[RMDB]
RNA sequence: GGGAACGACUCGAGUAGAGUCGAAAAUAUAGGUUCGUACGGCCUGGGACAGAACUUCUGGGUAGCACCCCUGUUGUGACCCUCAGUUUGCGUUUCCGCUAGCUGCCCCUUUUCAACAGUCUAUACAAGCGGGUCAGUUAUUCGUAGUUGGUCUGCUAAAAGAAACAACAACAACAAC
Reactivity to 2A3 in 0.01 (KOAc 150mM, MgCl2 10mM, bicine 150mM(pH8.5), 24C), signal-to-noise 9, nucleotides 027 to 126: u240a010u050a030g080g010u040u100c050g010u070a060c050g040g010c010c010u030g000g010g020a040c040a090g060a100a050c000u090u050c040u080g020g000g020u040a040g040c020a080c000c010c000c030u030g010u060u030g030u070g050a060c010c000c000u020c010a030g010u020u080u100g040c040g010u030u090u040c030c020g000c030u020a010g010c010u030g010c010c000c000c000u030u050u050u060c030a070a060c010a060g070u010c040u080a140u050a160c040a080
Reactivity to DMS in 0.01 (KOAc 150mM, MgCl2 10mM, bicine 150mM(pH8.5), 24C), signal-to-noise 9, nucleotides 027 to 126: u040a080u020a050g010g010u010u010c070g020u010a070c080g000g000c020c020u010g010g000g010a070c090a120g010a090a100c100u010u010c050u020g000g000g010u010a080g010c080a140c050c040c020c040u010g000u010u010g010u010g010a080c040c010c020u010c070a060g010u010u010u010g010c070g010u000u010u010c040c020g010c090u010a050g010c020u000g000c030c010c010c030u000u010u010u010c100a070a090c140a080g010u010c050u010a070u020a090c160a070